[RMDB]
RNA sequence: GGGAACGACUCGAGUAGAGUCGAAAAGCGUAAUUCGUUACGCCGAACACCUUUGUGACCUUGAGAGCUAUAAUCUAUGUAGUAGAAACCCAUUGGGUUUAGAGCAUAGGUAGCUCAAUGAUGGGUCACUCUGGUUAUACAAUGGAUUCGUCCAUAAUAUCUGAACAGUUUUCGAACUGUUCAGAUAAAAAGAAACAACAACAACAAC
Reactivity to DMS in 0.01 (KOAc 150mM, MgCl2 10mM, bicine 150mM(pH8.5), 24C), signal-to-noise 3, nucleotides 027 to 156: g010c010g040u000a030a060u000u020c300g050u010u000a020c000g040c010c010g010a110a120c080a090c010c000u000u010u000g030u000g010a030c020c000u000u000g010a080g020a020g000c010u000a060u000a190a150u000c000u000a020u000g030u000a150g020u010a210g010a040a030a020c000c010c010a300u010u010g060g050g010u000u010u000a050g010a300g000c000a040u000a020g000g010u000a040g010c000u000c010a070a050u000g010a090u000g000g020g010u000c000a010c000u000c010u020g000g030u000u000a120u000a070c090a080a050u000g000g020a130u000u010c170g020u000c000c010a030u000a170a280
Reactivity to 2A3 in 0.01 (KOAc 150mM, MgCl2 10mM, bicine 150mM(pH8.5), 24C), signal-to-noise 7, nucleotides 027 to 156: g000c000g000u020a020a050u070u130c160g040u150u010a020c000g000c000c010g050a060a030c030a020c100c000u000u020u010g000u010g000a000c000c000u020u000g020a010g000a010g010c010u030a030u060a300a170u160c010u010a000u040g030u030a130g050u040a090g300a080a010a010c020c010c070a300u210u300g010g000g000u000u020u020a070g020a010g010c010a000u000a000g010g020u010a010g000c000u000c000a010a020u040g010a010u020g000g000g000u000c000a000c000u000c000u000g000g020u020u020a060u020a120c170a100a080u040g000g010a030u050u060c180g050u060c070c020a010u090a150a050
The record gives the reactivity of an RNA of 207 nucleotides to DMS and 2A3. The reactions ran in a buffer of 150 mM KOAc, 10 mM MgCl2 and 150 mM bicine (pH 8.5), at 24 C. The DMS profile rests on 6,463 reads.